Structure probing data (DMS) for a 177-nucleotide construct.

RNA sequence: GGGAACGACUCGAGUAGAGUCGAAAAAGAGUACGGCCGCAAGGUUUGCGGUUGUGGAUGGCAGCGUGUGUGUCGCCCCGUCGUCUAGUGCUGGUUCUAGGGCUGGGGCGUCAGCAUCCAGGUAAAAUGCGUACAGUUAGUUCGCUAACUGUACGCAAAAAGAAACAACAACAACAAC
Reactivity to DMS in 0.01 (KOAc 150mM, MgCl2 10mM, bicine 150mM(pH8.5), 24C), signal-to-noise 1, nucleotides 027 to 126: a040g000a150g000u000a060c090g000g010c000c020g020c030a020a120g010g010u010u000u010g010c010g000g000u000u010g020u000g020g010a070u000g000g020c120a070g000c110g020u000g000u000g040u010g020u000c020g000c010c010c000c020g020u000c020g020u000c000u000a010g020u020g040c090u000g000g020u000u000c000u010a030g000g020g020c020u010g010g000g010g010c010g000u000c030a040g010c030a030u000c070c020a060g030g010u000a070a020a070a120

The reactions ran in a buffer of 150 mM KOAc, 10 mM MgCl2 and 150 mM bicine (pH 8.5), at 24 C.